[RMDB]
RNA sequence: GGGAACGACUCGAGUAGAGUCGAAAAGAUAUGGACGAGGAUUGAUUUCUUUGAUCUAGCGUCGGAAACGACGCUAGGGAGAAAGAGAUCUCGUCCUAAGUCAAAUCGGAAUCUUCGGAUUCCGAAACACAGUACUUGUCUUCGGACAAGUACUGUGAAAAGAAACAACAACAACAAC
Reactivity to 2A3 in 0.01 (KOAc 150mM, MgCl2 10mM, bicine 150mM(pH8.5), 24C), signal-to-noise 2, nucleotides 027 to 126: g010a020u070a020u130g000g010a000c020g040a010g300g160a140u060u100g070a040u080u190u090c000u300u260u060g010a040u050c010u010a000g000c000g000u000c010g000g000a050a070a000c010g000a000c000g000c010u000a000g000g000g000a020g060a000a150a000g080a010g000a040u070c000u000c000g010u000c010c010u010a080a000g000u010c030a000a020a300u060c000g000g000a010a000u000c000u090u140c300g120g000a000u020u000c020c000g010a000a000a000
Reactivity to DMS in 0.01 (KOAc 150mM, MgCl2 10mM, bicine 150mM(pH8.5), 24C), signal-to-noise 2, nucleotides 027 to 126: g010a090u000a300u010g000g000a010c000g000a030g010g000a070u000u000g000a300u000u000u000c010u000u000u020g030a070u010c000u000a000g010c000g050u000c000g000g000a090a020a130c000g010a010c000g000c000u000a000g000g000g000a050g010a000a010a070g010a300g000a020u000c000u000c010g020u010c000c010u020a020a090g000u000c040a120a150a240u010c010g020g010a030a000u000c000u000u010c110g080g010a050u000u000c000c010g010a010a040a140